[RMDB]
RNA sequence: GGGAACGACUCGAGUAGAGUCGAAAAAUGACCAGAUGCAAUCUUCAAAGGCAUCACACGGCCGACCUGUGUCUGAUAGCCCCGGGGGCCUGAGGUACUUCUCCAUCACAUUCACCAUAUCUGGAGACAGAACAAAGUGGGGCCCCAUUCACUGCACGAUGCAUAAGAUAUUCGUAUCUUAUGCAUCAAAAGAAACAACAACAACAAC
Reactivity to 2A3 in 0.01 (KOAc 150mM, MgCl2 10mM, bicine 150mM(pH8.5), 24C), signal-to-noise 5, nucleotides 027 to 156: a000u120g050a010c020c040a030g020a050u050g000c040a050a090u040c070u150u180c180a110a080a060g030g020c000a060u090c020a020c000a010c080g050g020c030c020g030a080c020c040u060g010u010g000u020c020u020g040a090u090a080g020c000c000c020c030g020g010g000g000g010c000c000u020g020a050g090g090u050a050c000u000u020c010u000c010c020a060u160c050a030c020a110u240u180c080a100c130c020a110u060a100u220c070u050g010g000a020g000a020c090a060g040a060a040c030a070a110a030g060u120g060g010g010g020c010c000c010c000a010u050u060c030a020c040u050g000c060a040c160
Reactivity to DMS in 0.01 (KOAc 150mM, MgCl2 10mM, bicine 150mM(pH8.5), 24C), signal-to-noise 3, nucleotides 027 to 156: a100u000g000a050c020c010a050g020a010u010g010c010a110a040u010c060u020u020c110a120a100a150g000g020c010a080u000c110a110c170a100c150g000g020c020c000g010a090c270c040u010g000u000g000u000c000u000g000a110u000a170g000c000c000c000c060g010g000g050g080g060c020c030u000g010a080g010g010u000a060c020u000u000c010u010c000c030a050u010c040a050c090a140u000u010c100a190c110c100a160u000a080u000c090u000g000g000a050g000a060c060a070g000a130a130c070a030a070a210g020u000g030g030g040g030c010c000c000c000a020u000u000c050a210c050u000g000c070a130c150
This 207-nucleotide RNA was probed chemically with 2A3 and DMS. The RNA was probed in 150 mM KOAc, 10 mM MgCl2 and 150 mM bicine (pH 8.5) at 24 C. The data come from the RNA Mapping Database (RMDB), library OK3TST. For DMS the reverse transcriptase was MarathonRT. Values are in units of 0.01, from 0 to 300, in steps of 10. For DMS, 6,050 sequencing reads were counted.